The data come from the RNA Mapping Database (RMDB), library M2PK90. Chemical mapping of a 177-nucleotide RNA with DMS. Reactivities are rounded to 0.1 and cut off at 0 and 3.
[RMDB]
RNA sequence: GGGAACGACUCGAGUAGAGUCGAAAAGAAAAAGCGGAAGUGGCGAAAUCGGUAGACGCAGUUGAUCAAAGAUGAACCGUAGAAAUACGUGCUGGUUCGAGUCCAGCCUUCCGCACCGAAAAAAAAAGGGAUAGGUAUUGUUCGCAAUACCUAUCCCAAAAGAAACAACAACAACAAC
Reactivity to DMS in 0.01 (KOAc 150mM, MgCl2 10mM, bicine 150mM(pH8.5), 24C), signal-to-noise 1, nucleotides 027 to 126: g010a010a080a150a220a140g010c000g020g000a020a030g020u040g020g000c000g000a000a010a000u010c300g070g030u000a000g010a260c000g000c000a170g010u010u000g000a000u000c060a080a110a180g010a050u000g000a000a000c010c000g000u000a000g010a080a080a180u000a000c000g000u000g000c000u000g000g000u000u000c030g010a300g010u000c010c000a000g000c000c000u000u000c000c000g000c040a090c060c000g000a050a000a000a050a020a020a020a050a300